[RMDB]
RNA sequence: GGGAACGACUCGAGUAGAGUCGAAAAUCGAAAUCAUCGGGAGUGAUCCAGAUGACGGUCCUGCCAUGAGACCGCAACGAGAGCAUGUCGCAUCGAAUGGACUCGGGGAGUCGGCAGCUUGCCCUACUAAGGCAGACGUUGUUCGCAACGUCUGCAAGUCUUUAACCACCUUCGGGUGGUUAAAGACAAAAGAAACAACAACAACAAC
Reactivity to 2A3 in 0.01 (KOAc 150mM, MgCl2 10mM, bicine 150mM(pH8.5), 24C), signal-to-noise 1, nucleotides 027 to 156: u030c010g030a020a010a070u000c020a010u010c020g000g030g000a040g090u080g020a100u040c030c040a020g040a030u040g000a020c010g000g000u030c010c020u030g150c020c080a120u130g040a030g000a050c010c010g050c050a010a040c030g030a010g000a000g080c030a090u100g030u100c070g000c090a040u050c000g060a080a060u150g080g060a030c030u040c060g000g000g070g000a070g100u110c010g010g000c000a020g010c040u010u150g040c000c010c000u070a120c030u070a040a040g060g020c000a000g000a000c010g000u000u020g000u000u040c070g030c090a000a000c000g000u000c010u010g010c000a000a000